Annotation
An RNA of 177 nucleotides, treated with DMS and 2A3 and read out base by base. Conditions: 150 mM KOAc, 10 mM MgCl2 and 150 mM bicine (pH 8.5), 24 C. 2A3 adducts were read by reverse transcription with SuperScript II with manganese.
[RMDB]
RNA sequence: GGGAACGACUCGAGUAGAGUCGAAAACAGCACUUUAAUUAUUCUUCUCGUUCCCACCUAAUUUCGCAAUUUAUUGUCCUUGACUUCUACCACGAGAAAAAAAUUAAGAAAAUGCAACGCUGCCCGUUGGUACUCAUGAAUUCGUUCAUGAGUACCAAAAAGAAACAACAACAACAAC
Reactivity to DMS in 0.01 (KOAc 150mM, MgCl2 10mM, bicine 150mM(pH8.5), 24C), signal-to-noise 1, nucleotides 027 to 126: c060a170g000c050a140c100u030u000u020a130a040u020u000a140u030u000c030u000u000c050u000c020g030u000u000c000c000c010a140c170c030u000a040a030u030u000u010c060g040c000a010a040u000u000u000a070u020u040g000u020c040c010u030u060g020a070c000u000u000c010u040a020c010c080a110c080g020a080g020a000a000a010a030a020a000a030u030u000a090a080g000a010a130a060a020u010g000c080a040a000c130g010c000u000g000c020c040c000g000u010
Reactivity to 2A3 in 0.01 (KOAc 150mM, MgCl2 10mM, bicine 150mM(pH8.5), 24C), signal-to-noise 4, nucleotides 027 to 126: c010a000g090c000a030c040u110u080u110a140a040u090u090a190u110u050c040u060u020c010u010c020g010u020u040c000c000c000a050c020c040u130a110a130u100u090u110c060g030c080a060a050u040u080u130a170u100u170g040u060c000c000u030u090g020a010c010u060u000c020u070a060c020c030a090c040g000a010g010a020a000a030a000a000a000a010u110u080a050a010g050a060a120a020a010u110g020c030a040a060c040g000c010u020g030c000c010c020g000u010